[RMDB]
RNA sequence: GGGAACGACUCGAGUAGAGUCGAAAAGGUCGUCUUUUCGAAGACGACCACUGUCGUUCCCAAAACUUUUCGAAACAUGUCGAAAGACUUGCUGAAACAGAAUUGGUGUGUGUUUCGACACACACAAUUGCAGAGGAGAGUUCGCUCUCCUCUGCAAAAAAGAAACAACAACAACAAC
Reactivity to DMS in 0.01 (KOAc 150mM, MgCl2 10mM, bicine 150mM(pH8.5), 24C), signal-to-noise 1, nucleotides 027 to 126: g000g020u000c000g030u010c000u000u000u000u020c090g040a020a020g020a040c010g010a000c000c010a050c100u010g000u000c000g000u000u000c000c010c000a050a080a090a170c080u000u010u000u000c020g010a140a160a200c050a000u000g030u000c000g000a090a070a250g010a040c020u000u000g050c070u000g000a080a030a030c250a060g010a010a080u000u000g020g060u000g000u000g010u000g020u000u000u020c180g010a020c030a020c000a000c000a020c000a000a070
The record gives the reactivity of an RNA of 177 nucleotides to DMS. DMS adducts were read by reverse transcription with MarathonRT.